RNA sequence: GGGAACGACUCGAGUAGAGUCGAAAACCCCAGAGGAAGACCAUAGCCAUGGGGAGAGAUGCUAGGAGUGGGGGGCGACCGGAACGAGGAGAAAAGUAAAGAGAGCAACGGGGCUAGCGAGUGGAUGUAAGCCUGACCUUCGGGUCAGGCAAAAGAAACAACAACAACAAC
Reactivity to 2A3 in 0.01 (KOAc 150mM, MgCl2 10mM, bicine 150mM(pH8.5), 24C), signal-to-noise 2, nucleotides 027 to 129: c000c000c000c000a050g020a050g080g010a050a000g000a000c030c000a050u080a030g040c090c000a040u170g000g000g010g010a000g030a020g000a020u100g030c070u040a010g050g060a050g000u190g000g000g000g000g000g000c000g050a000c000c000g010g010a020a040c020g000a010g100g000a010g030a040a110a020a000g140u180a000a110a000g050a000g050a020g000c000a010a110c030g000g000g000g000c000u000a010g010c020g060a030g030u040g010g030a030u080g040u070a000a080
Reactivity to DMS in 0.01 (KOAc 150mM, MgCl2 10mM, bicine 150mM(pH8.5), 24C), signal-to-noise 3, nucleotides 027 to 129: c000c000c000c000a150g020a050g080g020a000a060g000a090c030c200a090u010a060g020c090c070a040u010g000g000g020g020a150g020a020g020a120u060g040c160u000a010g030g010a090g000u010g000g000g000g060g050g100c050g010a080c000c000g060g000a070a020c000g050a140g010g010a120g040a000a070a040a040g040u060a000a000a000g030a100g030a030g000c100a130a110c050g000g020g000g040c100u070a110g000c060g040a000g000u000g010g030a140u030g050u050a130a090
Record summary:
Chemical mapping of a 170-nucleotide RNA with 2A3 and DMS. DMS adducts were read by reverse transcription with MarathonRT. The data come from the RNA Mapping Database (RMDB), library 15KLIB. The reactions ran in a buffer of 150 mM KOAc, 10 mM MgCl2 and 150 mM bicine (pH 8.5), at 24 C.